[RMDB]
RNA sequence: GGGAACGACUCGAGUAGAGUCGAAAAUCUAGUAAAACUUUCUAGUUAUCAUGUAGUAAGUGUCGAUUGUAACAAGGAACUGAUGCCUAUUAGGACAGAUACUACUAUUUGUCUAAGUAUAGAUCAAAGUCCAAUACGUGUUCGCACGUAUUGGACUAAAAGAAACAACAACAACAAC
Reactivity to 2A3 in 0.01 (KOAc 150mM, MgCl2 10mM, bicine 150mM(pH8.5), 24C), signal-to-noise 1, nucleotides 027 to 126: u000c000u000a030g020u010a050a120a100a120c080u160u100u060c020u030a030g030u150u090a140u260c060a030u070g000u050a030g000u060a300a080g010u000g050u020c000g080a130u040u120g180u070a020a140c100a060a050g060g000a020a030c060u140g050a040u190g010c020c000u090a160u000u170a020g020g000a010c020a000g000a010u050a010c010u010a010c000u010a030u000u000u020g010u000c010u000a120a000g020u010a080u060a160g010a010u060c020a070a070
Reactivity to DMS in 0.01 (KOAc 150mM, MgCl2 10mM, bicine 150mM(pH8.5), 24C), signal-to-noise 2, nucleotides 027 to 126: u000c020u000a080g030u020a080a090a090a140c040u000u000u010c080u010a080g020u010u010a100u010c040a040u000g010u000a020g040u010a070a060g030u000g010u000c020g000a150u000u030g000u010a010a080c080a060a050g000g010a100a070c180u010g040a120u010g020c070c040u000a080u020u000a110g010g020a010c070a090g000a020u010a020c130u000a050c070u010a020u010u010u010g010u000c040u000a070a070g000u020a100u000a030g020a040u000c100a110a090
About this RNA: Structure probing data (2A3 and DMS) for a 177-nucleotide construct. The 2A3 profile rests on 678 reads. It was measured as part of the RMDB library OK2TST. The RNA was probed in 150 mM KOAc, 10 mM MgCl2 and 150 mM bicine (pH 8.5) at 24 C.